Overview: An RNA of 177 nucleotides, treated with DMS and 2A3 and read out base by base.
RNA sequence: GGGAACGACUCGAGUAGAGUCGAAAAGAUAUGGAUUCAGCUUUUGACGCCUGGCGAUUCGGAAACGAAUCGAUCAGGCGAUAAGCUGGUCCUAAGUCAAACAUCACAGUCUUCGGACUGUGAUGAACAGUUAAAUCGUGUUCGCACGAUUUAACUGAAAAGAAACAACAACAACAAC
Reactivity to DMS in 0.01 (KOAc 150mM, MgCl2 10mM, bicine 150mM(pH8.5), 24C), signal-to-noise 3, nucleotides 027 to 126: g000a060u000a300u010g020g000a010u000u020c020a000g000c000u000u000u000u000g030a180c010g010c000c020u000g010g010c020g000a010u000u000c010g000g000a120a100a120c000g010a010a000u010c000g030a070u000c000a000g010g020c010g010a020u000a000a000g010c000u000g000g000u000c000c000u000a030a100g010u000c020a180a160a260c010a000u010c000a000c000a000g000u000c000u010u010c230g020g000a000c000u010g020u000g000a000u000g010a060a140
Reactivity to 2A3 in 0.01 (KOAc 150mM, MgCl2 10mM, bicine 150mM(pH8.5), 24C), signal-to-noise 3, nucleotides 027 to 126: g030a010u110a030u210g020g000a040u300u300c010a020g000c010u090u070u100u160g280a190c070g000c000c000u000g000g020c000g010a000u000u020c000g010g000a070a080a020c010g010a000a030u010c010g020a060u010c000a010g000g000c010g000a000u000a020a000g000c010u010g000g000u010c000c000u020a130a010g050u000c030a110a050a050c000a000u020c010a010c010a000g010u000c010u060u170c270g070g000a010c000u010g000u000g000a000u010g000a010a000

The 2A3 profile rests on 4,972 reads. For DMS the reverse transcriptase was MarathonRT.